[RMDB]
The data come from the RNA Mapping Database (RMDB), library OK1LIB. An RNA of 177 nucleotides, treated with 2A3 and DMS and read out base by base. The 2A3 profile rests on 675 reads. The DMS profile rests on 1,861 reads. Conditions: 150 mM KOAc, 10 mM MgCl2 and 150 mM bicine (pH 8.5), 24 C. DMS adducts were read by reverse transcription with MarathonRT. For 2A3 the reverse transcriptase was SuperScript II with manganese.
RNA sequence: GGGAACGACUCGAGUAGAGUCGAAAAGAUGUCUUCAGUGGAACCAAGGUUUUUGUGUCUGAGAACAAAGCGUCAGCUUCUCGAGAUGUGGACAGCUUCUACAACUUUGCUGACAUGCAGAUGGGAAAUCACCGGCUUUAUUCGUAAAGCCGGUGAUAAAAGAAACAACAACAACAAC
Reactivity to 2A3 in 0.01 (KOAc 150mM, MgCl2 10mM, bicine 150mM(pH8.5), 24C), signal-to-noise 2, nucleotides 027 to 126: g050a040u030g000u000c070u070u020c030a000g000u010g090g030a000a030c040c000a060a190g050g000u000u070u000u050u230g030u090g040u000c040u020g000a000g020a180a070c010a040a080a050g020c000g010u000c000a080g020c040u110u050c000u130c090g020a020g010a020u060g020u110g040g000a000c050a040g040c000u000u050c000u050a050c020a140a050c000u070u170u060g010c030u030g040a010c000a100u070g000c000a010g050a150u130g030g020g030a000a180
Reactivity to DMS in 0.01 (KOAc 150mM, MgCl2 10mM, bicine 150mM(pH8.5), 24C), signal-to-noise 2, nucleotides 027 to 126: g040a080u000g010u000c010u000u010c000a080g050u000g020g000a070a040c200c020a050a070g010g000u010u020u000u000u010g030u050g070u000c080u030g000a060g000a050a060c100a060a230a100g000c040g000u030c010a050g000c000u000u010c090u050c110g000a030g000a090u010g050u000g000g000a020c190a210g020c300u010u010c040u000a060c070a050a100c090u000u000u000g000c010u070g000a010c040a060u000g040c000a030g000a070u000g010g000g010a050a100
Values cover nucleotides 27 to 126.